This 207-nucleotide RNA was probed chemically with DMS and 2A3. Conditions: 150 mM KOAc, 10 mM MgCl2 and 150 mM bicine (pH 8.5), 24 C. It was measured as part of the RMDB library OK3TST. DMS adducts were read by reverse transcription with MarathonRT.

RNA sequence: GGGAACGACUCGAGUAGAGUCGAAAAGCAGUGUGGUACUGAUGCAUGAUUCUAAAAACAACAGAACAGACCAGAAAGUCUAGAAAUAGAUUGAACUCAGAAAUUUCAUGUCUGAUAAAGGUGGCAUUUCAGAGCAGUGGGGAAAUGACGUAUUAUACAGCACCAUAUGAUUCGUCAUAUGGUGCUGAAAAGAAACAACAACAACAAC
Reactivity to DMS in 0.01 (KOAc 150mM, MgCl2 10mM, bicine 150mM(pH8.5), 24C), signal-to-noise 2, nucleotides 027 to 156: g030c020a110g050u010g050u000g000g010u000a060c050u000g040a110u000g030c010a050u010g020a090u000u020c050u040a040a060a040a120a100c030a080a140c060a060g010a050a120c030a120g000a060c000c000a140g030a100a140a040g030u000c020u000a060g000a140a100a130u000a040g020a030u000u010g030a100a110c080u000c050a070g000a070a070a070u000u010u000c050a120u000g000u010c000u000g020a120u010a000a020a080g020g010u010g030g010c040a120u000u000u000c020a070g050a120g050c030a050g030u000g040g050g000g040a010a040a040u010g000a050c070g010u000a040u000u000a060u000a140
Reactivity to 2A3 in 0.01 (KOAc 150mM, MgCl2 10mM, bicine 150mM(pH8.5), 24C), signal-to-noise 3, nucleotides 027 to 156: g020c050a020g000u050g010u020g060g030u030a060c040u030g040a110u080g010c020a040u040g030a100u130u050c080u160a070a050a030a080a050c040a050a000c010a030g010a050a020c000a010g010a030c000c100a020g150a070a050a080g010u000c010u010a030g040a060a110a070u050a000g010a010u010u130g030a050a030c010u030c100a010g100a070a130a060u010u140u100c060a050u100g060u020c000u020g020a070u100a160a080a000g050g000u050g020g040c050a050u000u090u110c030a010g020a010g030c020a010g060u010g020g020g020g030a010a040a060u110g030a000c010g010u030a040u050u100a110u180a020